[RMDB]
Chemical mapping of a 177-nucleotide RNA with DMS and 2A3. For 2A3 the reverse transcriptase was SuperScript II with manganese.
RNA sequence: GGGAACGACUCGAGUAGAGUCGAAAAGACGGUCAUGGUAGAGACCGAGUAAGCGCACAUAGAAAGCCGUCAGAACAGAGAGAAGUGUGCAACUGCGCUGAACGAAGUGCAGAGACUGACGAGAAGAACCUGAGUGAUCGUUCGCGAUCACUCAGGUAAAAGAAACAACAACAACAAC
Reactivity to DMS in 0.01 (KOAc 150mM, MgCl2 10mM, bicine 150mM(pH8.5), 24C), signal-to-noise 2, nucleotides 027 to 126: g070a130c020g010g010u000c000a030u040g010g000u000a190g000a110g000a000c000c010g010a230g000u030a010a010g050c040g010c040a050c030a050u120a050g000a130a130a090g000c060c020g000u050c000a030g000a120a050c200a130g000a060g070a200g030a120a220g010u000g000u000g010c070a180a240c010u000g010c000g030c000u000g000a210a050c300g050a210a010g030u000g000c010a010g000a020g000a190c000u000g000a020c010g030a260g010a130a070g010a030
Reactivity to 2A3 in 0.01 (KOAc 150mM, MgCl2 10mM, bicine 150mM(pH8.5), 24C), signal-to-noise 2, nucleotides 027 to 126: g010a010c040g000g000u000c020a140u210g100g000u210a110g050a020g000a150c000c000g010a000g050u100a170a030g020c040g000c040a010c080a130u300a020g250a100a050a000g020c010c000g000u000c000a000g000a150a050c050a040g070a000g050a000g040a300a060g070u000g000u000g000c000a010a000c000u000g000c000g000c000u020g000a030a130c010g110a130a000g000u010g000c010a000g000a000g000a060c000u010g000a000c000g000a020g100a180a030g000a000
Description: For DMS the reverse transcriptase was MarathonRT. The RNA was probed in 150 mM KOAc, 10 mM MgCl2 and 150 mM bicine (pH 8.5) at 24 C. It was measured as part of the RMDB library OK1LIB.